Structure probing data (DMS and 2A3) for a 177-nucleotide construct. The RNA was probed in 150 mM KOAc, 10 mM MgCl2 and 150 mM bicine (pH 8.5) at 24 C. High DMS reactivity at an A or C suggests that its Watson-Crick edge is free. 2A3 adducts were read by reverse transcription with SuperScript II with manganese.
[RMDB]
RNA sequence: GGGAACGACUCGAGUAGAGUCGAAAACGCUACUUCACCUCGCACAAAGAAGUGCUGCUGCACCUCGCCGCCGAGGGUUGGGCGCGGUGGUCGGGCACGGUAUGCGAGCAGCUGGGCGAGCCGGGGCGCUGUACCCAAAGUUCGCUUUGGGUACAGCAAAAGAAACAACAACAACAAC
Reactivity to DMS in 0.01 (KOAc 150mM, MgCl2 10mM, bicine 150mM(pH8.5), 24C), signal-to-noise 2, nucleotides 027 to 126: c080g020c050u020a100c060u010u020c050a090c220c050u010c010g000c010a090c180a120a130a120g010a130a090g020u020g010c000u000g030c040u050g000c030a020c020c040u000c060g010c060c050g000c060c070g020a130g020g000g040u010u020g000g010g010c010g010c140g000g020u000g010g020u040c110g000g000g000c020a050c020g010g000u000a040u020g020c030g000a020g000c120a030g010c000u000g000g000g000c000g030a070g000c050c030g020g020g000g020c110
Reactivity to 2A3 in 0.01 (KOAc 150mM, MgCl2 10mM, bicine 150mM(pH8.5), 24C), signal-to-noise 5, nucleotides 027 to 126: c060g020c040u110a130c030u080u060c020a050c050c000u020c010g020c030a030c040a050a160a010g130a180a030g050u010g010c020u030g000c040u160g000c020a020c010c000u020c010g030c030c010g070c020c010g110a170g050g100g030u080u160g140g030g000c030g000c020g000g020u030g010g080u110c040g010g000g000c020a000c050g000g040u140a100u060g020c010g010a020g000c020a020g020c010u060g010g000g050c020g030a020g000c000c010g010g030g000g000c040